[RMDB]
RNA sequence: GGGAACGACUCGAGUAGAGUCGAAAAGUCGUGAACCCCGCCGGACUCACCCAGGCCAAGACCGUGCCGAUACGCCGGACCAACACAUUCGCCAAUCCUGGCCUCGGCGCCAGUCCGGUGUGGCAUAACGAUAGCCAAAGUUCGCUUUGGCUAUCGUAAAAGAAACAACAACAACAAC
Reactivity to DMS in 0.01 (KOAc 150mM, MgCl2 10mM, bicine 150mM(pH8.5), 24C), signal-to-noise 2, nucleotides 027 to 126: g010u020c050g000u000g010a300a160c080c000c010c010g010c040c000g000g020a040c000u000c070a100c300c020c020a030g000g000c010c010a080a010g000a080c110c030g020u010g020c030c020g000a070u020a040c150g000c010c030g000g000a170c160c080a070a140c070a030c100a180u020u030c150g000c020c040a090a070u000c070c050u000g020g010c000c010u000c300g000g000c010g010c130c190a000g010u000c000c000g000g000u000g010u000g060g010c070a080u010a140
Reactivity to 2A3 in 0.01 (KOAc 150mM, MgCl2 10mM, bicine 150mM(pH8.5), 24C), signal-to-noise 1, nucleotides 027 to 126: g020u030c000g040u040g050a070a110c000c000c030c010g000c000c010g030g000a000c000u010c090a030c010c010c000a000g020g000c000c000a000a000g020a040c000c050g030u080g030c000c000g060a080u120a190c110g060c080c000g070g000a030c030c010a090a050c040a000c000a210u140u160c090g040c090c050a040a040u070c020c000u010g030g020c020c000u030c040g000g000c000g000c040c040a000g000u000c000c000g060g000u000g010u000g010g000c000a030u120a180
An RNA of 177 nucleotides, treated with DMS and 2A3 and read out base by base. The DMS profile rests on 1,030 reads. 2A3 adducts were read by reverse transcription with SuperScript II with manganese. The reactions ran in a buffer of 150 mM KOAc, 10 mM MgCl2 and 150 mM bicine (pH 8.5), at 24 C. DMS adducts were read by reverse transcription with MarathonRT. The 2A3 profile rests on 1,457 reads.